[RMDB]
RNA sequence: GGGAACGACUCGAGUAGAGUCGAAAAUCAGAUGAGACUAGCCAUCAGACUAGAUAGUAUCACACUACGGGUACAUAGUAGAGACAUACAUAGAUGCGUAUGACACAUCAGAGGCGCGGGCCACCGAAUUAUCCAUAAUGUUCGCAUUAUGGAUAAUAAAAGAAACAACAACAACAAC
Reactivity to 2A3 in 0.01 (KOAc 150mM, MgCl2 10mM, bicine 150mM(pH8.5), 24C), signal-to-noise 9, nucleotides 027 to 126: u070c020a020g040a110u060g030a020g030a080c030u030a020g040c020c010a070u050c030a050g070a110c020u040a020g040a120u060a060g060u040a040u090c030a030c020a020c180u180a040c070g030g010g020u060a040c040a080u070a030g040u040a010g030a010g020a090c010a050u100a030c010a030u120a050g100a070u100g040c020g020u060a050u090g040a020c010a000c010a090u070c010a010g020a050g070g020c040g000c040g020g040g010c010c000a020c010c010g010a040
Reactivity to DMS in 0.01 (KOAc 150mM, MgCl2 10mM, bicine 150mM(pH8.5), 24C), signal-to-noise 9, nucleotides 027 to 126: u010c060a080g010a080u000g010a130g010a090c040u000a070g010c030c020a090u010c100a100g010a120c040u000a050g000a120u000a070g010u000a060u000c060a070c110a100c080u000a050c100g010g000g010u000a060c070a070u000a060g010u000a050g010a110g000a090c090a040u000a050c070a070u000a070g010a060u000g010c080g010u000a050u000g000a100c070a060c040a040u010c030a060g010a110g000g010c050g010c070g010g000g000c030c030a060c050c040g000a110